RNA sequence: GGGAACGACUCGAGUAGAGUCGAAAAGCCCGGCCAGACGGAUUCCAUGGCGAACGGCGCGGCGUCUUCGGUCGGGUCUUCGGACUGAGCCGUUUCAGCGAGCGGAGACGGGGCUUUCGCAAACGCCGCCUAAUAGUUCUUUCGAGAACUAUUAGGCAAAAGAAACAACAACAACAAC
Reactivity to DMS in 0.01 (KOAc 150mM, MgCl2 10mM, bicine 150mM(pH8.5), 24C), signal-to-noise 3, nucleotides 027 to 126: g000c010c010c010g020g010c010c020a080g010a030c070g010g000a200u000u000c020c030a110u010g010g010c020g010a100a080c120g010g030c080g030c070g000g010c030g020u010c010u000u010c100g020g000u000c000g000g010g000u000c010u000u000c070g010g000a060c030u010g010a050g020c010c010g010u000u000u000c040a090g020c020g010a100g020c030g030g000a070g010a150c080g010g000g010g010c040u000u010u010c060g020c070a060a090a140c130g020c090c150
Reactivity to 2A3 in 0.01 (KOAc 150mM, MgCl2 10mM, bicine 150mM(pH8.5), 24C), signal-to-noise 2, nucleotides 027 to 126: g020c000c020c000g000g040c010c010a020g020a040c010g030g060a110u170u060c040c020a120u180g150g030c020g020a110a040c090g080g000c060g020c030g100g020c010g010u020c000u080u110c070g090g000u010c000g000g020g000u000c000u020u030c030g040g000a040c020u080g030a000g050c010c010g020u020u040u040c050a050g040c030g040a020g010c010g020g010a020g010a030c020g010g000g030g000c020u030u100u140c040g010c010a060a110a060c030g060c130c030